Source: RMDB library M2PK50, as collected in RNAgym.
The record gives the reactivity of an RNA of 177 nucleotides to 2A3 and DMS.
For DMS, 14,237 sequencing reads were counted.
[RMDB]
RNA sequence: GGGAACGACUCGAGUAGAGUCGAAAAAGCAGUCGAUUCGUCGACUGCUAAUGGGUCGGGACUACAUCACAGGUUCUUCGCUAGCCCUCUUUGGACCAGUAAAAAAGAGCUUAUUCGUAAGCUCUAACGUUAUCUUUGAAUUCGUUCAAAGAUAACGAAAAGAAACAACAACAACAAC
Reactivity to 2A3 in 0.01 (KOAc 150mM, MgCl2 10mM, bicine 150mM(pH8.5), 24C), signal-to-noise 8, nucleotides 027 to 126: a000g000c000a000g000u000c000g010a010u050u060c090g060u000c000g110a030c000u000g000c000u000a010a060u070g020g000g010u050c000g000g010g030a020c020u100a030c070a110u120c060a030c030a090g020g010u050u010c000u070u070c030g010c060u050a070g020c000c010c000u010c030u060u060u070g020g010a040c020c040a040g150u190a020a110a040a030a020a000g000a000g000c000u030u020a030u050u110c190g040u030a000a000g000c000u010c000u010a020a000
Reactivity to DMS in 0.01 (KOAc 150mM, MgCl2 10mM, bicine 150mM(pH8.5), 24C), signal-to-noise 8, nucleotides 027 to 126: a040g010c010a010g010u000c000g010a030u000u010c190g020u000c000g010a010c000u000g010c000u000a010a040u010g010g010g020u000c040g000g010g010a260c040u000a060c120a060u010c110a080c120a090g000g000u000u000c020u000u000c080g010c090u010a100g000c020c010c020u000c100u000u000u000g020g010a080c030c020a090g020u010a000a040a060a050a060a020g000a010g010c000u000u000a040u000u010c160g010u000a010a010g010c000u000c000u000a020a080